[RMDB]
RNA sequence: GGGAACGACUCGAGUAGAGUCGAAAAACGCUGGCGCUUUUCCAUUUGGUCAAAGAGAAGGUGGAGGCACUUCUUGCUUCGCCGGUUUUGGGAAUCAUUUUGAUCCUGACCGGCGUAUUUGGCGUGAAAUCGCAUUCUGAUUCGUCAGAAUGCGAUUAAAAGAAACAACAACAACAAC
Reactivity to DMS in 0.01 (KOAc 150mM, MgCl2 10mM, bicine 150mM(pH8.5), 24C), signal-to-noise 3, nucleotides 027 to 126: a060c090g010c040u010g000g000c080g020c040u010u010u000u010c000c030a110u000u010u020g020g000u010c070a080a090a090g000a110g010a080a050g000g020u000g000g020a050g010g030c030a060c050u000u000c030u000u000g010c200u000u000c010g020c000c000g000g000u000u000u020u000g030g000g020a050a060u030c020a200u000u010u010u010g000a040u010c000c000u000g000a010c000c000g000g000c000g010u000a010u000u000u000g010g010c040g000u000g000a090
Reactivity to 2A3 in 0.01 (KOAc 150mM, MgCl2 10mM, bicine 150mM(pH8.5), 24C), signal-to-noise 2, nucleotides 027 to 126: a010c050g000c070u080g100g000c040g050c060u110u130u040u030c030c010a070u100u050u190g100g010u070c010a060a100a000g070a020g000a080a000g000g010u040g010g010a020g020g020c010a010c040u040u010c000u030u050g020c010u040u000c010g010c010c040g000g020u060u030u100u040g040g000g030a080a130u010c020a060u020u230u260u300g010a020u000c000c000u000g000a020c000c000g030g000c000g000u010a000u030u030u060g000g040c030g000u040g020a030
Chemical mapping of a 177-nucleotide RNA with DMS and 2A3. The reactions ran in a buffer of 150 mM KOAc, 10 mM MgCl2 and 150 mM bicine (pH 8.5), at 24 C. For DMS, 3,636 sequencing reads were counted.